[RMDB]
RNA sequence: GGGAACGACUCGAGUAGAGUCGAAAAGUGAUCACGCCCGACCUGCUGGACGGCUAUGCCGAGCGGGCCAGCGAUUUCGAGGUGGAGCUGGUCGACGGCGUGGGCCAUUGGAUCGUCGAGCAGCGACAAAUGCAGGCGAGUUCGCUCGCCUGCAUUUAAAAGAAACAACAACAACAAC
Reactivity to 2A3 in 0.01 (KOAc 150mM, MgCl2 10mM, bicine 150mM(pH8.5), 24C), signal-to-noise 2, nucleotides 027 to 126: g060u050g050a110u040c050a030c050g050c000c000c000g000a000c000c030u000g050c000u050g090g080a040c080g070g000c000u050a060u110g030c010c000g100a280g300c000g100g030g090c050c000a000g000c000g070a180u070u090u200c160g010a090g000g240u130g070g020a020g000c000u010g000g000u050c050g020a000c010g020g000c000g040u110g000g000g000c040c030a090u200u060g050g160a080u040c030g000u050c080g090a000g000c000a000g040c000g020a040c090
Reactivity to DMS in 0.01 (KOAc 150mM, MgCl2 10mM, bicine 150mM(pH8.5), 24C), signal-to-noise 2, nucleotides 027 to 126: g000u020g020a060u030c130a040c110g010c010c030c040g070a140c260c000u020g000c000u000g000g030a010c000g010g010c000u000a000u000g020c000c070g000a050g030c000g010g000g010c000c000a010g020c000g000a210u040u000u000c130g000a070g020g000u030g010g010a300g000c020u000g030g000u000c000g040a300c030g010g000c000g010u010g000g000g030c100c040a150u040u030g020g020a170u000c040g040u000c010g000a030g000c000a010g000c100g000a110c130
Conditions: 150 mM KOAc, 10 mM MgCl2 and 150 mM bicine (pH 8.5), 24 C. This 177-nucleotide RNA was probed chemically with 2A3 and DMS. As a SHAPE reagent, 2A3 marks flexible, mostly unpaired nucleotides at the ribose 2'-OH.